Structure probing data (2A3 and DMS) for a 177-nucleotide construct. Reactivities are given for positions 27 through 126. 2A3 adducts were read by reverse transcription with SuperScript II with manganese.
RNA sequence: GGGAACGACUCGAGUAGAGUCGAAAACGGGAGGUAGAGCACCGGAUCGAUGAGGGGGCUUCGCCGCCUACCGAUUCGAACCGAACUCCGAAUGCCCGAGGGUCUAGAGCGCGGCAGUCAGAACAUGCCUGUGCUUAGCUUUCGAGCUAAGCACAGGAAAAGAAACAACAACAACAAC
Reactivity to 2A3 in 0.01 (KOAc 150mM, MgCl2 10mM, bicine 150mM(pH8.5), 24C), signal-to-noise 3, nucleotides 027 to 126: c010g010g010g030a020g030g050u180a020g040a040g050c030a020c080c010g000g000a020u000c000g010a010u010g010a050g010g010g000g000g000c000u130u110c090g060c060c000g000c000c000u270a300c000c010g010a000u000u020c000g010a010a000c000c010g020a060a040c000u000c010c030g020a070a050u070g060c000c000c000g010a040g020g030g020u060c020u070a020g000a020g060c030g010c000g000g020c000a000g010u040c010a020g010a100a070c020a080u100g030
Reactivity to DMS in 0.01 (KOAc 150mM, MgCl2 10mM, bicine 150mM(pH8.5), 24C), signal-to-noise 3, nucleotides 027 to 126: c030g000g000g000a040g000g000u040a070g010a100g000c170a130c130c020g010g000a180u000c000g000a010u000g000a300g000g000g000g000g010c010u000u010c300g000c300c250g000c010c000u000a110c000c000g020a300u000u000c000g020a000a100c000c000g000a240a200c000u000c000c030g000a170a100u140g000c030c040c000g000a150g030g010g000u000c040u080a080g000a130g000c000g010c000g020g030c000a010g000u030c000a070g000a080a100c170a100u030g000